[RMDB]
Overview
An RNA of 177 nucleotides, treated with 2A3 and DMS and read out base by base. The data come from the RNA Mapping Database (RMDB), library 15KREP.

RNA sequence: GGGAACGACUCGAGUAGAGUCGAAAAAAAAUAGCGAAGUGCUUAAGGCUAUCUUAGUGAAGUAUGGUUGCUGUGAUGUUACCUACUUUGAAAAUAAACUCUGGUUUGAUUUUGUUGAAAAUCCCAGGUAUAACAAUACCUUCGGGUAUUGUUAUACAAAAGAAACAACAACAACAAC
Reactivity to 2A3 in 0.01 (KOAc 150mM, MgCl2 10mM, bicine 150mM(pH8.5), 24C), signal-to-noise 1, nucleotides 027 to 126: a000a020a000a040u010a000g000c010g040a010a040g150u110g100c010u070u050a070a000g130g000c000u010a040u050c010u050u100a070g010u020g100a010a010g000u020a010u240g030g020u000u010g010c010u040g040u050g100a030u130g030u030u000a040c000c010u010a020c050u040u020u000g050a130a100a010a010u120a040a100a010c060u030c020u080g030g060u110u060u060g010a030u000u090u110u050g060u000u060g080a050a020a000a020u000c000c000c000a010g040
Reactivity to DMS in 0.01 (KOAc 150mM, MgCl2 10mM, bicine 150mM(pH8.5), 24C), signal-to-noise 3, nucleotides 027 to 126: a050a040a050a030u010a040g010c010g000a120a100g010u010g010c110u000u000a080a070g010g000c040u000a020u000c070u000u000a120g010u000g010a020a030g020u000a020u010g010g000u000u000g010c010u000g010u000g000a100u000g010u010u000a040c020c010u000a020c030u000u000u000g000a080a060a060a080u010a070a060a060c050u010c050u000g010g000u010u000u000g000a070u000u000u000u000g020u000u010g010a060a050a040a050u000c010c000c000a090g020